[RMDB]
RNA sequence: GGGAACGACUCGAGUAGAGUCGAAAAAUUCACAGGCCCAUUGCCCCAUAUCUACUUGUCAAUAUGAGAAAGCAGGAGGCCAAGAAUUACAAAAUGAUUCUCCUUUGGUUGGACUUCAGUACCCAGGCCACCCAAAUUGACAAAAACUCUGAAUGCACGAACCAUCAGAUUUCGAUCUGAUGGUUCGAAAAGAAACAACAACAACAAC
Reactivity to 2A3 in 0.01 (KOAc 150mM, MgCl2 10mM, bicine 150mM(pH8.5), 24C), signal-to-noise 1, nucleotides 027 to 156: a000u120u080c070a050c060a060g000g000c000c000c020a000u000u020g000c000c010c000c000a000u010a000u000c160u080a070c030u050u080g080u150c060a090a000u030a060u050g100a100g100a210a020a000g000c010a010g030g100a100g060g020c010c010a000a000g010a000a000u090u090a060c030a080a180a000a100u110g020a040u110u000c000u030c000c000u050u030u040g040g010u000u000g000g050a060c020u030u020c060a120g070u100a110c060c020c070a050g040g000c020c040a060c070c000c000a000a050a010u070u130g030a060c020a000a020a210a150a040c030u030c040u080g080a110a110u300g000c030a050